[RMDB]
RNA sequence: GGGAACGACUCGAGUAGAGUCGAAAAGGGUGAUGUCUCCUAACCUUUAUCAAUGGGGGCACUCGGUCAUGCUGUGGGUAGAAAUUUUAUUUCGUGCCUACCUUAGACGCUUGUCGUCGGGAGUAUGUGGGACUGAUGAACUUCGGUUCAUCAGUAAACCUAUACCGCGGUUCGCCGCGGUAUAGGUAAAAGAAACAACAACAACAAC
Reactivity to DMS in 0.01 (KOAc 150mM, MgCl2 10mM, bicine 150mM(pH8.5), 24C), signal-to-noise 1, nucleotides 027 to 156: g020g030g020u000g000a120u000g010u000c050u010c000c010u000a120a090c040c040u000u000u000a130u010c080a110a150u010g000g020g020g050g000c030a050c020u000c040g050g010u000c020a050u000g020c050u010g030u010g030g010g030u000a280g010a080a010a110u000u000u000u010a070u010u020u000c050g000u010g070c020c000u000a010c010c070u000u000a180g010a030c000g000c040u020u010g030u010c000g070u010c000g010g030g010a110g000u000a020u000g020u000g010g020g040a060c000u030g000a010u000g000a010a030c000u010u000c300g050g000u000u000c010a000u000c000a020g000u000a010a120
Reactivity to 2A3 in 0.01 (KOAc 150mM, MgCl2 10mM, bicine 150mM(pH8.5), 24C), signal-to-noise 4, nucleotides 027 to 156: g040g030g010u040g040a100u040g020u010c010u010c010c000u020a110a160c020c000u110u170u130a170u160c100a100a090u220g010g000g000g000g000c000a030c020u030c020g090g000u040c020a030u030g030c040u040g040u060g020g000g020u020a010g110a000a030a030u150u300u120u170a080u070u120u020c010g050u100g010c000c010u040a070c010c000u030u020a040g020a010c020g000c070u100u210g090u240c030g000u020c000g010g030g000a040g010u050a030u110g040u110g020g030g000a000c000u000g000a000u000g000a000a000c000u020u060c180g050g000u010u010c000a000u000c000a000g000u000a040a010